[RMDB]
RNA sequence: GGGAACGACUCGAGUAGAGUCGAAAAAGGCUUAACAUUAUUGGAACUUCCUCCAAGACCCCUACUACUGUAGCUAAAGCGGCACCACUAUCUAAACCAAACAAGGCUAUUGCAACUGCUACGGCCAGUCUAAUCAGGUGUUCGCACCUGAUUAGACAAAAGAAACAACAACAACAAC
Reactivity to 2A3 in 0.01 (KOAc 150mM, MgCl2 10mM, bicine 150mM(pH8.5), 24C), signal-to-noise 1, nucleotides 027 to 126: a000g060g010c070u080u060a030a000c000a160u160u120a120u180u170g040g000a090a040c010u100u000c010c000u000c000c000a060a060g080a180c010c000c020c020u000a020c010u000a000c020u070g010u050a000g030c040u040a170a000a000g050c020g020g010c010a000c060c000a020c000u000a020u000c010u070a090a020a050c040c040a070a030a060c050a150a000g060g000c010u000a000u110u200g000c010a180a180c110u150g000c000u000a000c000g000g000c000c020a000
Reactivity to DMS in 0.01 (KOAc 150mM, MgCl2 10mM, bicine 150mM(pH8.5), 24C), signal-to-noise 1, nucleotides 027 to 126: a090g000g000c030u000u000a060a050c020a110u000u010a080u030u000g000g000a070a130c140u000u030c070c030u000c030c050a110a080g000a180c030c010c060c010u000a030c110u000a070c070u030g010u000a020g030c020u000a060a030a070g010c070g020g030c020a030c060c060a100c040u000a020u000c080u000a030a040a110c030c070a100a060a040c190a110a090g000g010c000u000a230u000u010g020c030a090a080c290u000g000c000u000a010c120g010g040c050c040a100
Overview:
This 177-nucleotide RNA was probed chemically with 2A3 and DMS. The DMS profile rests on 599 reads. Source: RMDB library OK2TST, as collected in RNAgym.